[RMDB]
RNA sequence: GGGAACGACUCGAGUAGAGUCGAAAAUUCAGCAAUUAAAUACCUGGAACAUGGAGGAUGUCGAUCAAUUACGCUGGCCGCUGUGUGCAAUCGCCAUAGAAGCGCGAUAUCUUUCAUUAAAUUGUGCCAAACAACAUAACUUCGGUUAUGUUGUUUGAAAAGAAACAACAACAACAAC
Reactivity to DMS in 0.01 (KOAc 150mM, MgCl2 10mM, bicine 150mM(pH8.5), 24C), signal-to-noise 9, nucleotides 027 to 126: u000u000c060a120g010c030a060a040u000u010a050a070a100u000a150c050c010u000g020g010a060a060c110a040u000g010g000a030g000g000a030u010g020u000c010g010a140u010c160a100a100u010u000a180c100g010c060u000g020g020c070c180g010c040u000g010u000g010u000g030c040a110a080u000c160g010c010c010a060u000a080g010a100a060g010c060g010c010g020a020u000a010u000c020u000u000u000c020a030u000u010a030a040a070u010u000g010u000g030c190
Reactivity to 2A3 in 0.01 (KOAc 150mM, MgCl2 10mM, bicine 150mM(pH8.5), 24C), signal-to-noise 8, nucleotides 027 to 126: u050u030c020a020g020c010a020a050u060u100a130a070a050u130a120c010c020u040g050g040a050a040c040a040u020g010g000a000g000g010a010u000g020u010c010g020a060u100c080a120a100u190u080a060c040g000c030u030g050g010c030c030g010c050u040g040u020g010u020g100c020a060a250u200c100g000c010c010a020u030a090g150a110a010g030c040g000c010g030a000u000a000u000c000u010u020u010c000a010u010u110a040a080a060u070u040g030u050g060c040